[RMDB]
Background:
An RNA of 177 nucleotides, treated with 2A3 and read out base by base. Source: RMDB library OK1LIB, as collected in RNAgym. For 2A3 the reverse transcriptase was SuperScript II with manganese. Conditions: 150 mM KOAc, 10 mM MgCl2 and 150 mM bicine (pH 8.5), 24 C.
RNA sequence: GGGAACGACUCGAGUAGAGUCGAAAAGUGUAGGAGCAACAUAAAGACGUCAGGCGCCCAAAGAGGUGUUGCUGAAGAUGGUCUACGUACAAUUGAAGCGGUUUCGGCGCGCUGACACCGCUGCUCCGGGUGGGCCAUUAUUCGUAAUGGCCCACCCAAAAGAAACAACAACAACAAC
Reactivity to 2A3 in 0.01 (KOAc 150mM, MgCl2 10mM, bicine 150mM(pH8.5), 24C), signal-to-noise 1, nucleotides 027 to 126: g240u190g040u140a150g000g070a010g040c010a000a060c050a010u210a160a250a000g090a000c060g000u050c000a000g000g010c000g000c010c010c010a080a300a000g080a120g030g170u300g000u090u190g000c030u050g000a090a000g000a050u040g060g040u000c040u050a050c190g210u140a020c030a050a050u080u110g070a130a000g000c030g000g080u000u000u080c020g000g040c050g000c050g000c020u020g000a000c010a000c000c000g000c040u020g000c000u060c000c000